[RMDB]
RNA sequence: GGGAACGACUCGAGUAGAGUCGAAAAGUUCGUUCUCGUCGGUCUCUCCUGCGUCCACCUCCGCCACGAUCUUCCCCCUGUAGAUCACGGCGAUCCGAUCGGACAGAUCGAGUAUCUCGUCGAGGUCGAAAGAGUCUGUAUUCGUACAGACUCUUUCAAAAGAAACAACAACAACAAC
Reactivity to 2A3 in 0.01 (KOAc 150mM, MgCl2 10mM, bicine 150mM(pH8.5), 24C), signal-to-noise 2, nucleotides 027 to 126: g030u060u040c010g000u040u000c020u000c030g070u030c040g000g050u010c020u000c000u010c040c010u020g020c030g050u000c010c020a050c010c010u040c020c010g030c020c000a060c050g060a090u010c010u040u040c000c020c000c000c000u050g050u130a030g010a010u000c000a000c020g000g000c000g000a010u000c020c010g000a010u000c000g030g110a060c080a120g020a010u020c020g000a040g060u080a130u070c080u010c010g020u000c010g020a020g010g020u020c020
Reactivity to DMS in 0.01 (KOAc 150mM, MgCl2 10mM, bicine 150mM(pH8.5), 24C), signal-to-noise 8, nucleotides 027 to 126: g010u000u000c020g010u000u000c010u000c010g030u010c060g020g000u000c030u010c040u000c030c020u010g010c080g010u000c040c050a100c060c020u000c040c030g010c040c030a110c080g010a090u000c050u000u000c020c020c010c100c070u010g010u010a110g000a020u000c010a150c020g010g010c020g000a020u000c040c010g000a020u000c010g000g030a150c210a140g000a010u000c010g000a090g010u000a060u010c190u000c030g020u000c010g000a060g010g020u010c030